Chemical mapping of a 177-nucleotide RNA with DMS and 2A3. For DMS, 1,890 sequencing reads were counted. The reactions ran in a buffer of 150 mM KOAc, 10 mM MgCl2 and 150 mM bicine (pH 8.5), at 24 C. The 2A3 profile rests on 2,244 reads.
RNA sequence: GGGAACGACUCGAGUAGAGUCGAAAAAAAAUCCAUUCAUGGUUAACCAAUUGGCUUAUAGCUCUAGUGCAAAUGGCAGCCUGGUUGGCACAACUUUGCAGGGCAAGCCUAUUGGUAUGUUCUUCCCCGUGUAAAACAACUUCGGUUGUUUUACACGAAAAGAAACAACAACAACAAC
Reactivity to DMS in 0.01 (KOAc 150mM, MgCl2 10mM, bicine 150mM(pH8.5), 24C), signal-to-noise 2, nucleotides 027 to 126: a000a020a050a010u010c010c030a080u020u010c200a060u000g010g000u000u000a090a030c000c010a030a020u000u000g010g000c020u000u000a180u010a300g000c000u000c010u000a150g020u000g010c000a010a000a010u000g000g000c200a200g000c000c000u000g020g020u020u000g010g010c010a050c090a090a090c180u010u000u000g000c000a060g000g020g020c000a020a030g030c010c010u000a030u000u000g000g010u000a020u000g000u000u010c170u000u010c010c010c000
Reactivity to 2A3 in 0.01 (KOAc 150mM, MgCl2 10mM, bicine 150mM(pH8.5), 24C), signal-to-noise 2, nucleotides 027 to 126: a000a000a000a000u020c030c000a050u070u120c080a070u190g040g000u060u080a030a000c000c000a020a000u020u010g010g000c020u060u080a050u120a260g000c010u010c030u060a080g200u030g050c000a020a030a020u050g050g030c030a020g030c000c000u150g300g120u150u190g070g050c020a020c010a080a060c070u000u030u000g000c000a010g000g010g000c000a010a000g020c000c000u010a000u000u000g000g010u010a040u110g040u000u030c030u000u010c010c000c000